[RMDB]
RNA sequence: GGGAACGACUCGAGUAGAGUCGAAAAGGCACAGAUCAUGUGGUCUCGGACUUGAGGCUUCCUCAAAAUCUGGUUGAUGAGCUUGUCUACAGAUUCCGAUUUGCGUGUGCAGUUAUGGCGCAAAUACUGAGGCUGAGGAAUUCGUUCCUCAGCCUCAAAAAGAAACAACAACAACAAC
Reactivity to 2A3 in 0.01 (KOAc 150mM, MgCl2 10mM, bicine 150mM(pH8.5), 24C), signal-to-noise 2, nucleotides 027 to 126: g030g010c020a120c090a010g040a100u060c080a160u140g040u070g110g010u020c010u000c040g100g080a110c100u040u050g000a000g000g090c000u140u000c030c020u020c050a010a040a040a080u000c030u080g170g040u070u070g000a040u060g010a000g040c040u090u100g080u120c040u060a080c090a050g020a020u020u000c040c000g010a010u000u010u010g040c000g000u070g050u100g180c100a080g020u140u280a050u120g070g000c000g000c000a030a030a010u090a090c040
Reactivity to DMS in 0.01 (KOAc 150mM, MgCl2 10mM, bicine 150mM(pH8.5), 24C), signal-to-noise 1, nucleotides 027 to 126: g000g020c000a090c090a000g000a090u010c130a120u000g000u040g030g040u020c000u030c000g000g020a100c080u030u010g010a050g010g030c140u000u040c000c000u000c090a150a010a100a130u010c000u000g000g070u000u070g000a050u000g010a000g000c080u000u000g010u040c010u010a000c130a070g000a140u010u000c050c090g020a030u000u000u000g000c020g000u000g050u030g050c150a080g020u030u070a010u050g000g000c010g070c050a020a000a010u000a120c110
Annotation:
An RNA of 177 nucleotides, treated with 2A3 and DMS and read out base by base. For DMS the reverse transcriptase was MarathonRT. For DMS, 1,395 sequencing reads were counted.